[RMDB]
RNA sequence: GGGAACGACUCGAGUAGAGUCGAAAAGGCGCUGCCGGAGGCGCGCGGCACGAAACGCUACGGCUUCGGCGCGUACCGCGCGGAGAAUUACGACGAGCUGAUCGAUCAUCCGGUCACGCUCGGCGAACCACUCAGUACCCUUCGGGGUACUGAGUGGAAAAGAAACAACAACAACAAC
Reactivity to DMS in 0.01 (KOAc 150mM, MgCl2 10mM, bicine 150mM(pH8.5), 24C), signal-to-noise 2, nucleotides 027 to 126: g000g000c080g050c020u000g040c000c020g030g000a040g000g040c020g010c300g030c010g010g000c140a130c080g020a090a030a140c070g020c000u000a080c060g000g020c040u010u010c020g060g040c000g020c030g010u020a020c060c020g020c050g010c030g010g000a150g000a150a100u020u020a200c000g010a050c000g010a010g020c020u030g000a010u020c000g010a060u020c270a060u010c190c000g010g010u000c000a030c240g000c000u020c000g030g010c020g010a170a150
Reactivity to 2A3 in 0.01 (KOAc 150mM, MgCl2 10mM, bicine 150mM(pH8.5), 24C), signal-to-noise 1, nucleotides 027 to 126: g040g010c020g050c090u170g010c000c020g030g010a030g120g070c000g010c000g010c000g060g000c120a040c150g190a200a160a010c070g010c070u190a060c040g080g000c000u000u010c010g020g010c000g010c000g000u040a060c040c070g000c050g020c000g060g100a090g060a150a130u190u080a120c060g000a030c000g010a010g000c000u000g000a020u040c010g080a040u060c040a110u090c070c030g000g000u000c000a000c050g000c000u010c000g000g000c000g010a000a030

This 177-nucleotide RNA was probed chemically with DMS and 2A3. As a SHAPE reagent, 2A3 marks flexible, mostly unpaired nucleotides at the ribose 2'-OH. For DMS the reverse transcriptase was MarathonRT. For 2A3, 1,244 sequencing reads were counted. It was measured as part of the RMDB library OK2TRN. For 2A3 the reverse transcriptase was SuperScript II with manganese.